[RMDB]
RNA sequence: GGGAACGACUCGAGUAGAGUCGAAAAAGGUUCAUCAUGUGCCUGCGGAUACAUUUAAAGCUGUGGCUUCUCUUAACCAUAAUAUUCAUAUCGGGCUAUCGGCAACACCGUAUAGAGAAGACGCUUAUGAUGAGGUAAUUUACGGUCUUACGUCAUCCUGUGUCUGUAAAUUCGUUUACAGACACAGAAAAGAAACAACAACAACAAC
Reactivity to DMS in 0.01 (KOAc 150mM, MgCl2 10mM, bicine 150mM(pH8.5), 24C), signal-to-noise 3, nucleotides 027 to 156: a030g010g000u000u000c030a060u010c090a100u000g030u000g000c010c000u000g020c090g000g010a170u000a090c070a080u000u000u010a090a100a120g020c060u010g030u000g010g000c020u000u000c030u000c040u000u000a110a090c040c010a160u000a040a130u000a120u000u000c050a130u010a080u010c050g010g010g000c050u010a080u000c050g020g010c030a090a100c050a300c010c020g060u000a120u000a090g000a080g010a080a050g000a080c020g020c030u000u000a090u010g010a050u000g000a060g000g010u000a050a050u000u000u000a070c070g000g010u010c090u000u000a040c020g030u000c030a150u000c020
Reactivity to 2A3 in 0.01 (KOAc 150mM, MgCl2 10mM, bicine 150mM(pH8.5), 24C), signal-to-noise 7, nucleotides 027 to 156: a010g080g010u070u040c030a090u030c030a050u230g040u050g050c000c010u030g000c040g040g050a030u070a140c030a090u120u170u230a110a110a020g040c050u050g050u050g120g000c000u030u000c000u000c000u060u090a100a060c020c010a060u090a200a060u080a200u140u170c090a040u090a070u180c030g020g050g000c040u060a040u140c030g030g000c050a090a030c020a050c070c010g010u050a060u060a070g030a000g000a020a000g020a030c020g010c030u100u110a070u140g020a010u020g010a010g000g030u030a040a040u040u080u060a040c090g030g010u010c010u030u030a030c050g170u020c010a020u020c010